Source: RMDB library RFM100, as collected in RNAgym. This 177-nucleotide RNA was probed chemically with 2A3. For 2A3, 393 sequencing reads were counted. The RNA was probed in 150 mM KOAc, 10 mM MgCl2 and 150 mM bicine (pH 8.5) at 24 C.

RNA sequence: GGGAACGACUCGAGUAGAGUCGAAAAGAUAUUCGAGACGAAGAUAUGGGUGACUAAUACUUAAGAUUUUGGUCAAUUUAAAUUACCAAUCUAAUUAUUUGUUACCCAUAUCUCCAUCUCCAAUUUAGCCAAUAGCUUCCUUCGGGAAGCUAUUGGCAAAAGAAACAACAACAACAAC
Reactivity to 2A3 in 0.01 (KOAc 150mM, MgCl2 10mM, bicine 150mM(pH8.5), 24C), signal-to-noise 1, nucleotides 027 to 126: g080a070u280a000u100u020c020g000a010g010a030c000g050a090a000g000a000u000a000u000g040g000g070u000g000a000c000u040a000a000u000a000c000u040u010a150a030g000a010u100u150u270u240g000g000u020c140a040a060u030u150u230a080a300a230u130u020a000c000c000a000a020u030c000u020a000a000u000u000a000u000u000u060g000u000u000a060c090c000c000a000u000a000u000c000u010c010c000a000u000c000u010c030c000a040a000u170u070u190a020